[RMDB]
RNA sequence: GGGAACGACUCGAGUAGAGUCGAAAAUACUGAGCGCUGCGCUGACGUACCUAGACACUAGGCCGUACAUAUAUACUGCGCGCAUGUGCGGAUCUGCGUCUAUGGCCCAUCGGCCGUACACAGCUGGCUAUUAUCGUAAAUUCGUUUACGAUAAUAGAAAAGAAACAACAACAACAAC
Reactivity to 2A3 in 0.01 (KOAc 150mM, MgCl2 10mM, bicine 150mM(pH8.5), 24C), signal-to-noise 7, nucleotides 027 to 126: u120a020c040u050g040a020g040c050g000c050u070g010c030g000c060u020g030a030c030g020u020a060c000c010u010a020g020a050c040a040c120u090a010g030g000c000c000g010u020a010c010a000u090a000u050a010u030a140c060u100g060c040g000c020g010c060a010u030g010u010g010c030g010g030a160u040c010u040g010c010g010u000c010u020a070u170g020g000c020c010c000a070u080c030g010g000c030c020g020u040a030c070a000c010a080g020c020u050g050g000
Reactivity to DMS in 0.01 (KOAc 150mM, MgCl2 10mM, bicine 150mM(pH8.5), 24C), signal-to-noise 9, nucleotides 027 to 126: u010a120c050u000g000a080g010c060g020c050u000g020c100g020c020u000g010a060c070g010u000a070c020c030u000a010g000a050c040a050c040u000a030g010g010c080c000g010u000a010c020a020u000a100u010a120u010a100c100u000g010c050g010c050g010c140a020u000g010u000g010c000g000g000a060u010c030u000g010c040g000u000c020u000a020u010g010g010c050c050c060a070u000c060g010g020c020c060g010u000a040c110a100c060a070g010c050u000g010g010